[RMDB]
RNA sequence: GGGAACGACUCGAGUAGAGUCGAAAAGCUCCGUGCCCUUCCAUAGCACUGGGGUCCCGGGCCCCCUCCCAGGAAUGGGAAUGGGGGGAGAUCGACCGGGUCCCGCAGAACCCGAUGGAGUUCCCAAUUACGUCGAGGUUCGCCUCGACGAAAAGAAACAACAACAACAAC
Reactivity to 2A3 in 0.01 (KOAc 150mM, MgCl2 10mM, bicine 150mM(pH8.5), 24C), signal-to-noise 5, nucleotides 027 to 129: g020c010u000c010c020g020u020g000c030c000c010u120u030c010c010a020u070a030g020c040a010c160u140g010g000g010g010u040c000c010c010g030g040g000c010c010c000c000c010u060c010c000c010a040g040g130a100a120u040g000g000g020a040a070u140g050g000g020g000g050g000a050g040a080u160c030g030a060c000c000g000g000g000u020c000c000c020g000c010a050g040a050a030c000c020c040g030a010u070g000g010a000g000u010u010c000c000c010a010a030u190u210a070